Notes: Chemical mapping of a 177-nucleotide RNA with DMS and 2A3. 2A3 adducts were read by reverse transcription with SuperScript II with manganese. Conditions: 150 mM KOAc, 10 mM MgCl2 and 150 mM bicine (pH 8.5), 24 C. DMS (dimethyl sulfate) methylates the pairing face of unpaired adenines and cytosines. It was measured as part of the RMDB library M2PK50. The DMS profile rests on 1,159 reads.
RNA sequence: GGGAACGACUCGAGUAGAGUCGAAAAUGUUUGCAAUUCGUUGCAAACAAACUACCGAGAACGUUGCUCGGUAUAAACAGCGAACCCUUGGAAACAACGGAACUAUGGAACGCUUCGGCGUUCCAAAGCAAAAACGGUUAUUCGUAACCGUUUUUGCAAAAGAAACAACAACAACAAC
Reactivity to DMS in 0.01 (KOAc 150mM, MgCl2 10mM, bicine 150mM(pH8.5), 24C), signal-to-noise 2, nucleotides 027 to 126: u000g000u000u000u000g040c000a010a000u000u000c250g050u000u000g000c000a010a000a000c000a020a080a050c200u010a020c000c000g000a020g020a090a140c030g000u000u010g020c010u000c000g020g010u000a000u000a040a070a110c140a140g010c110g000a070a110c000c000c000u000u000g010g030a090a100a160c030a000a030c000g000g000a130a130c190u010a150u000g020g000a000a010c010g020c010u000u000c220g010g040c010g010u020u000c000c000a000a010a020
Reactivity to 2A3 in 0.01 (KOAc 150mM, MgCl2 10mM, bicine 150mM(pH8.5), 24C), signal-to-noise 1, nucleotides 027 to 126: u000g000u000u000u000g050c000a000a010u030u030c130g080u050u020g020c000a000a000a020c000a020a010a000c050u010a010c010c000g020a000g000a050a010c020g020u040u010g020c000u000c000g010g040u020a020u060a000a000a000c030a020g150c020g070a090a080c000c020c000u000u140g240g130a150a120a030c000a020a000c020g010g050a020a000c060u070a090u120g000g000a000a000c000g010c010u040u070c250g100g000c010g000u000u000c000c000a000a000a010